[RMDB]
RNA sequence: GGGAACGACUCGAGUAGAGUCGAAAAGCUUCCGUCGAACGCGAAAGUCGGACGGCGGCCAUGAGCCGCAACGCAAAGCCGCGGCAAGUGGAGUUAGCGAGAAGAGACUAGGCUUUGGUUUCUUCAAAUUAGUGAGUGUGGUUCGCCACACUCACAAGAUACAGCAUCUGUUCGCAGAUGCUGUAUCAAAAGAAACAACAACAACAAC
Reactivity to 2A3 in 0.01 (KOAc 150mM, MgCl2 10mM, bicine 150mM(pH8.5), 24C), signal-to-noise 5, nucleotides 027 to 156: g010c010u040u010c010c000g010u000c010g020a050a010c000g030c020g110a290a140a080g180u300c010g010g000a020c000g000g000c000g000g000c000c000a020u030g010a010g000c000c000g020c050a090a040c060g020c150a150a120a030g050c050c040g000c030g000g000c000a010a010g000u000g000g030a070g040u110u110a050g060c100g020a060g030a140a020g070a020g020a020c020u030a020g030g060c000u020u040u060g050g010u010u010u000c000u040u030c020a050a070a160u150u100a050g000u000g000a010g000u000g000u010g000g040u040u060c160g040c090c000a000c000a000c000u000c000a000c000a000a000
Reactivity to DMS in 0.01 (KOAc 150mM, MgCl2 10mM, bicine 150mM(pH8.5), 24C), signal-to-noise 2, nucleotides 027 to 156: g020c000u000u000c000c000g030u000c010g020a030a120c110g010c000g000a160a080a190g030u020c020g010g020a210c020g010g020c080g030g000c000c020a060u000g000a300g000c010c010g050c010a020a030c020g040c010a160a110a300g010c050c040g050c010g020g010c010a040a300g000u000g000g010a130g020u000u000a100g030c010g010a150g000a040a040g000a070g020a020c010u000a040g020g000c090u000u000u010g010g020u000u000u000c010u000u000c000a050a070a160u010u000a110g000u000g010a020g010u000g030u000g000g020u010u000c300g050c000c030a000c010a010c000u000c000a010c010a000a040